[RMDB]
This 207-nucleotide RNA was probed chemically with 2A3.
2A3 adducts were read by reverse transcription with SuperScript II with manganese.
The 2A3 profile rests on 908 reads.
Values cover nucleotides 27 to 156.
The data come from the RNA Mapping Database (RMDB), library VIROID.
RNA sequence: GGGAACGACUCGAGUAGAGUCGAAAAGUGAACCCCCUGGCUUUGGAUUUCCUCCCAGGUGUAGAAUCAAUCUCCAUGUCCUCUCGCCUGGGCCUCUUCGCCGGGGGUCCUCCCUCUUCGUCCUUCUUCUUUCUCAACAUUCCGACGAUGUUUCCCACAUACCCACUACGUUCGCGUAGUGGGUAUGAAAAGAAACAACAACAACAAC
Reactivity to 2A3 in 0.01 (KOAc 150mM, MgCl2 10mM, bicine 150mM(pH8.5), 24C), signal-to-noise 2, nucleotides 027 to 156: g050u060g040a090a010c000c000c000c000c100u090g030g000c020u120u070u120g040g040a090u110u300u190c010c050u040c000c000c000a000g050g000u040g040u190a010g000a010a030u070c050a040a140u040c140u110c190c100a080u100g030u020c040c000u000c000u000c010g010c020c010u000g000g000g040c010c000u030c030u100u020c050g000c000c000g000g000g000g000g010u010c000c000u020c020c000c010u020c020u010u030c020g000u020c030c000u040u070c020u070u020c020u040u240u060c090u040c050a090a220c050a160u200u160c090c070g050a040c030g050a190u100g010u020u030u010c000c000c000a040